[RMDB]
RNA sequence: GGGAACGACUCGAGUAGAGUCGAAAAUCGAUUAAUAGUACAGUCAUCUUGAGAUUUUCAACACACUAUUAUAGCUAGCUAAGAUACUUUUAAAUUAUGACUUAUUUUUCAUCAUUUACGAUACAUCCCGUCCUGGAAAGUUCGCUUUCCAGGACGGAAAAGAAACAACAACAACAAC
Reactivity to 2A3 in 0.01 (KOAc 150mM, MgCl2 10mM, bicine 150mM(pH8.5), 24C), signal-to-noise 2, nucleotides 027 to 126: u120c050g000a020u050u070a050a010u060a080g020u110a000c010a030g010u050c040a120u020c050u100u070g030a060g020a200u140u080u020u060c190a170a020c010a000c020a000c120u060a060u110u130a100u170a050g090c100u020a010g000c020u040a050a080g050a050u040a130c060u000u090u030u180a040a070a100u100u080a010u050g000a000c000u000u030a060u140u110u050u040u000c010a000u000c000a000u010u000u030a120c140g010a030u040a120c040a030u040c010